RNA sequence: GGGAACGACUCGAGUAGAGUCGAAAAUAAACCGUCCAGACUUGAAAAUCGUUCUAGGCUUAAUUACAUCCAAAACAGGUGAAUUAGAGGACGAAGCAGCCAUUAAAGCACGGAUUGAAGAAGCGAACAUAGUCCCUAGGUUCGCCUAGGGACUAUGAAAAGAAACAACAACAACAAC
Reactivity to DMS in 0.01 (KOAc 150mM, MgCl2 10mM, bicine 150mM(pH8.5), 24C), signal-to-noise 4, nucleotides 027 to 126: u010a080a100a160c070c050g010u010c040c070a150g030a050c030u000u020g000a080a060a100a090u010c020g020u000u000c020u000a090g010g020c060u000u010a020a050u000u000a120c050a040u000c020c030a040a060a100a080c270a070g000g010u000g000a060a050u010u010a060g010a130g000g000a040c070g010a040a090g020c050a050g000c020c030a060u020u000a050a090a070g010c080a050c060g000g000a100u000u000g010a080a040g000a080a100g010c060g010a070a130
Reactivity to 2A3 in 0.01 (KOAc 150mM, MgCl2 10mM, bicine 150mM(pH8.5), 24C), signal-to-noise 2, nucleotides 027 to 126: u040a010a040a030c010c000g020u000c040c030a020g040a140c010u050u020g020a020a060a070a070u040c000g020u020u010c050u050a090g170g000c000u020u020a000a000u040u050a110c010a060u020c030c030a030a070a100a020c030a070g000g020u010g020a010a010u040u020a060g010a040g040g020a000c010g010a050a030g030c040a000g060c060c000a040u090u180a110a050a050g010c030a020c060g040g010a100u030u180g030a110a070g020a010a030g030c000g040a030a040
Source: RMDB library OK2TST, as collected in RNAgym.
The record gives the reactivity of an RNA of 177 nucleotides to DMS and 2A3.
2A3 is a SHAPE reagent: it acylates the 2'-hydroxyl of flexible nucleotides of all four kinds.
For 2A3, 1,523 sequencing reads were counted.
The DMS profile rests on 3,192 reads.